[RMDB]
RNA sequence: GGGAACGACUCGAGUAGAGUCGAAAACAGUAUGCCUUCGGGCAUACUGAAACCAGAGGGUAUCUGGCCCACGCUCCCAUGCGUGCCGGGAAUCGCAUCCCAAAACGGAUGUCUUCGGACAUCCGAACUAUAAGACGAUGUUCGCAUCGUCUUAUAGAAAAGAAACAACAACAACAAC
Reactivity to 2A3 in 0.01 (KOAc 150mM, MgCl2 10mM, bicine 150mM(pH8.5), 24C), signal-to-noise 9, nucleotides 027 to 126: c010a000g010u000a000u010g010c010c010u050u120c280g100g000g000c000a000u000a000c000u000g000a050a000a000c010c000a010g030a030g070g150g080u240a090u070c010u020g030g000c020c030c000a000c010g010c010u130c020c050c030a040u170g010c010g020u040g060c070c060g030g000g050a020a060u110c070g020c070a070u040c010c000c010a010a070a010a020c010g000g000a000u000g000u000c000u030u070c220g100g000a000c000a000u000c000c000g000a020a020
Reactivity to DMS in 0.01 (KOAc 150mM, MgCl2 10mM, bicine 150mM(pH8.5), 24C), signal-to-noise 9, nucleotides 027 to 126: c010a010g010u000a000u000g010c000c000u000u020c200g020g010g010c000a000u000a000c000u000g010a020a080a130c010c010a020g000a030g010g010g020u000a070u000c010u000g000g000c060c030c030a260c060g010c020u000c060c060c060a100u000g010c030g010u000g010c180c080g000g000g000a080a050u010c090g010c110a150u000c000c010c010a050a050a090a200c020g000g000a010u000g010u000c000u000u010c180g020g010a010c000a000u000c000c000g000a010a080
An RNA of 177 nucleotides, treated with 2A3 and DMS and read out base by base. It was measured as part of the RMDB library M2PK50. 2A3 adducts were read by reverse transcription with SuperScript II with manganese. The reactions ran in a buffer of 150 mM KOAc, 10 mM MgCl2 and 150 mM bicine (pH 8.5), at 24 C.